[RMDB]
An RNA of 207 nucleotides, treated with DMS and 2A3 and read out base by base. Conditions: 150 mM KOAc, 10 mM MgCl2 and 150 mM bicine (pH 8.5), 24 C. For 2A3 the reverse transcriptase was SuperScript II with manganese. The data come from the RNA Mapping Database (RMDB), library OK3TST.

RNA sequence: GGGAACGACUCGAGUAGAGUCGAAAAGAAUGCAUAUUGCUUUUGCAUCAUCAUAAAGGCAAAGUCAUAAGUGGAACCAUUGUAAGUUGAGGACUUUCUGCAUACUGUAACUUUGGUUUGUGAAUGUAAUCACUUUGCAUGUGCUUUCAGGGAUGGCAAUUCACCCCUUCUUCGGAAGGGGUGAAUUAAAAGAAACAACAACAACAAC
Reactivity to DMS in 0.01 (KOAc 150mM, MgCl2 10mM, bicine 150mM(pH8.5), 24C), signal-to-noise 1, nucleotides 027 to 156: g010a130a030u040g040c040a070u010a010u030u000g060c070u000u000u000u000g010c030a060u000c030a040u010c080a100u020a020a090a060g000g020c020a030a030a100g020u000c050a080u000a030a070g040u000g020g000a090a090c030c000a110u000u000g020u000a020a030g020u000u000g010a150g050g010a120c100u010u000u000c060u020g040c010a090u000a020c020u010g030u000a060a030c070u000u000u020g010g000u000u000u000g000u000g030a100a060u000g030u010a090a130u000c050a090c300u000u000u000g000c010a050u000g040u010g040c070u030u000u000c020a090g020g010g020a050u000g010g000c140
Reactivity to 2A3 in 0.01 (KOAc 150mM, MgCl2 10mM, bicine 150mM(pH8.5), 24C), signal-to-noise 2, nucleotides 027 to 156: g050a030a020u050g000c030a010u060a060u120u080g060c000u080u080u040u060g020c010a030u070c010a070u030c000a010u090a120a100a020g120g050c010a000a000a000g020u080c050a040u090a190a000g050u030g040g000a020a000c010c020a060u000u080g050u050a050a020g020u030u080g090a100g020g100a070c030u060u080u040c040u030g000c000a020u030a130c030u090g030u190a120a020c040u080u070u110g060g020u030u060u000g030u020g050a100a020u060g000u100a000a050u100c020a030c050u050u080u070g010c010a010u040g000u020g060c080u060u030u030c050a040g000g070g010a040u040g000g030c000